[RMDB]
RNA sequence: GGGAACGACUCGAGUAGAGUCGAAAAGCCAUGGGGCUGCUGUGGCGAGGUCUUCCCACAUGGCCGCACCCUGUCUGAAGGAGCUAGUGGUGGGGCCCCGAAUAUUCUGAGGCCAGGAGCUCCCAAGAGUUGUAGACCAAUUCGUUGGUCUACAACUAAAAGAAACAACAACAACAAC
Reactivity to DMS in 0.01 (KOAc 150mM, MgCl2 10mM, bicine 150mM(pH8.5), 24C), signal-to-noise 2, nucleotides 027 to 126: g010c030c020a090u010g010g000g010g020c060u000g020c030u000g010u000g000g010c030g010a120g020g000u010c080u010u000c020c010c020a110c120a100u000g000g020c010c030g000c070a100c030c020c010u010g020u000c040u000g000a170a170g000g020a080g020c050u000a050g000u010g030g010u000g000g010g000g000c000c000c080c010g000a060a100u000a110u020u000c070u010g010a120g010g020c030c000a090g000g020a060g010c030u000c000c010c070a140a080g000
Reactivity to 2A3 in 0.01 (KOAc 150mM, MgCl2 10mM, bicine 150mM(pH8.5), 24C), signal-to-noise 2, nucleotides 027 to 126: g010c010c010a020u060g000g000g050g190c090u170g030c020u060g120u050g080g060c040g030a050g000g040u000c050u050u080c040c040c000a020c030a060u110g000g020c000c010g090c000a110c020c030c010u040g060u050c040u110g120a220a120g040g040a030g000c070u050a010g070u050g140g040u040g000g140g050g000c000c000c010c050g030a100a030u160a130u270u000c050u090g040a090g020g020c020c000a010g060g030a010g000c020u080c000c000c000a070a040g040